RNA sequence: GGGAACGACUCGAGUAGAGUCGAAAAGAUUCUGGAGCGAGAGCUAGGUUUUGUGCCGUUGUACAAACAGAAAAGUAGAGCUCCACGCAAUCACCCAGUGCUGGCUGCUCUUCGCGAGGUUAUGAGGAGGAUAACGUCGAUUCGUCGACGUUAUCCUAAAAGAAACAACAACAACAAC
Reactivity to DMS in 0.01 (KOAc 150mM, MgCl2 10mM, bicine 150mM(pH8.5), 24C), signal-to-noise 2, nucleotides 027 to 126: g010a000u000u040c000u060g000g000a040g020c000g010a230g020a080g010c000u000a060g020g010u000u000u000u000g020u000g000c000c300g050u040u060g000u000a000c000a000a030a020c010a090g000a030a220a020a060g040u020a000g000a300g020c000u010c000c000a010c210g050c040a010a000u000c040a180c000c000c000a050g020u020g010c020u000g000g000c080u010g000c040u010c010u040u010c060g000c050g000a100g000g000u010u020a090u020g050a110g000g020
Reactivity to 2A3 in 0.01 (KOAc 150mM, MgCl2 10mM, bicine 150mM(pH8.5), 24C), signal-to-noise 2, nucleotides 027 to 126: g000a060u000u000c000u010g000g000a000g000c040g020a050g000a010g250c000u000a070g030g040u020u000u130u000g000u000g000c060c140g060u040u230g010u060a000c000a040a040a010c040a010g180a160a180a120a000g070u150a030g020a060g030c000u000c000c010a020c110g000c070a000a000u050c000a000c000c000c000a000g010u100g140c010u060g020g030c050u060g010c000u050c000u120u060c000g000c060g000a050g020g110u080u130a070u160g070a000g100g130